[RMDB]
RNA sequence: GGGAACGACUCGAGUAGAGUCGAAAAGUUCCCUCUUAGCGUGGAGGUUUAACUACGCUCGUUCCCCAUAUCGGUGUGGGCGCACCGGAUUUAUAAAUCAAAGUCCUUUGGGGAACGGAAAGGAACAAAAAUCCAUGGGAGUUCGCUCCCAUGGAAACAGAAGGGAUAAGUUCGCUUAUCCCUUCUGAAAAGAAACAACAACAACAAC
Reactivity to 2A3 in 0.01 (KOAc 150mM, MgCl2 10mM, bicine 150mM(pH8.5), 24C), signal-to-noise 1, nucleotides 027 to 156: g020u000u030c000c000c000u020c000u000u070a000g000c000g000u000g010g010a070g050g070u150u170u100a100a020c040u040a040c020g010c020u000c000g010u000u000c000c010c010c030a060u100a080u150c010g020g000u000g000u030g000g020g000c060g060c040a000c000c010g020g000a030u060u300u040a200u100a120a070a040u120c100a040a000a020g030u030c030c000u030u080u040g000g000g000g010a000a000c000g000g000a040a040a020g120g000a030a050c120a100a090a050a000a030u030c000c000a000u000g000g000g000a040g010u040u130c100g070c110u000c000c000c030a010u000g000g000a000a000a000
Reactivity to DMS in 0.01 (KOAc 150mM, MgCl2 10mM, bicine 150mM(pH8.5), 24C), signal-to-noise 2, nucleotides 027 to 156: g000u000u000c010c000c000u000c040u000u010a080g000c010g080u020g000g030a090g010g020u010u000u000a120a180c020u000a020c020g040c020u010c000g020u010u000c010c000c000c040a110u010a080u010c020g030g100u000g040u020g030g020g050c180g020c030a040c020c000g040g000a100u000u000u010a110u000a100a140a160u010c130a110a070a100g000u000c030c030u000u000u010g020g010g000g000a020a020c020g020g000a060a120a060g010g000a060a070c090a020a050a120a140a230u000c000c000a020u000g030g020g020a090g000u000u000c300g010c000u000c000c000c000a000u000g010g010a010a000a100